[RMDB]
RNA sequence: GGGAACGACUCGAGUAGAGUCGAAAACUGUAAUGCUGUCCAGCUUUGUUUAGGAGAUUUCCGUCUGAUUCCUCCAUAUCGAAUCACAAAAGGCAAACUGCAGCUUGUGUUCUGUAACUUCUCCUCCGUAUAGAAAUACUUUCGAGUAUUUCUAUACAAAAGAAACAACAACAACAAC
Reactivity to 2A3 in 0.01 (KOAc 150mM, MgCl2 10mM, bicine 150mM(pH8.5), 24C), signal-to-noise 4, nucleotides 027 to 126: c020u020g090u180a090a050u150g000c020u020g050u060c040c050a030g030c060u040u040u060g070u030u110u100a070g010g060a130g020a220u070u110u050c040c020g040u020c100u060g020a100u060u050c010c010u030c030c020a010u020a020u100c060g040a070a010u060c030a020c030a080a120a030a030g040g010c020a080a040a040c060u040g000c000a010g000c000u060u070g050u020g020u070u020c040u060g080u050a070a090c020u050u030c020u040c020c020u040c060c050
Reactivity to DMS in 0.01 (KOAc 150mM, MgCl2 10mM, bicine 150mM(pH8.5), 24C), signal-to-noise 7, nucleotides 027 to 126: c040u000g020u010a080a070u010g010c020u010g000u010c120c040a060g020c110u000u000u010g010u000u000u010a080g000g000a080g010a160u010u010u000c020c040g010u010c080u000g010a090u000u000c020c040u000c040c080a050u000a030u000c060g000a060a050u000c040a040c070a030a040a080a190g000g000c020a030a050a100c090u000g010c020a050g010c050u000u010g010u000g000u000u000c050u010g010u010a070a090c100u000u000c030u000c010c050u000c130c150
This 177-nucleotide RNA was probed chemically with 2A3 and DMS. For DMS, 10,152 sequencing reads were counted. For 2A3, 4,897 sequencing reads were counted. The reactions ran in a buffer of 150 mM KOAc, 10 mM MgCl2 and 150 mM bicine (pH 8.5), at 24 C.